[RMDB]
RNA sequence: GGGAACGACUCGAGUAGAGUCGAAAAAACGUGCUCAAGGACACCGCCCUGGUGUUCGGCCAGAUGGAUGAGCCUCCCGGCACCCGUAUGCGGGUGGCACUGUCCGCGCUGACGAUGGCGGAGUGGAGAGGUAAAUGAUAUUCGUAUCAUUUACCUCAAAAGAAACAACAACAACAAC
Reactivity to DMS in 0.01 (KOAc 150mM, MgCl2 10mM, bicine 150mM(pH8.5), 24C), signal-to-noise 9, nucleotides 027 to 126: a050a050c190g010u010g010c010u000c040a110a120g010g000a030c020a020c010c010g010c130c100c090u010g000g010u000g010u000u000c020g010g010c030c030a140g010a110u010g010g010a260u000g000a050g010c010c020u000c010c010c010g020g010c010a030c020c030c040g020u010a100u010g020c040g010g000g010u000g000g010c040a070c080u010g000u000c010c010g010c050g020c060u000g010a120c150g000a100u000g000g010c020g000g000a080g020u000g000g010a290
Reactivity to 2A3 in 0.01 (KOAc 150mM, MgCl2 10mM, bicine 150mM(pH8.5), 24C), signal-to-noise 9, nucleotides 027 to 126: a000a000c080g070u130g010c010u020c050a070a100g030g000a010c010a010c010c010g080c060c050c090u110g020g000u020g010u050u020c000g000g000c010c000a170g060a300u260g080g040a060u040g030a030g010c000c000u020c000c010c000g070g010c020a030c010c040c020g090u180a150u290g140c050g000g000g010u010g010g010c020a020c080u090g070u000c010c000g010c010g020c080u100g070a130c090g120a130u120g050g000c020g020g000a020g040u080g020g080a150

An RNA of 177 nucleotides, treated with DMS and 2A3 and read out base by base. Values cover nucleotides 27 to 126. For DMS, 45,416 sequencing reads were counted.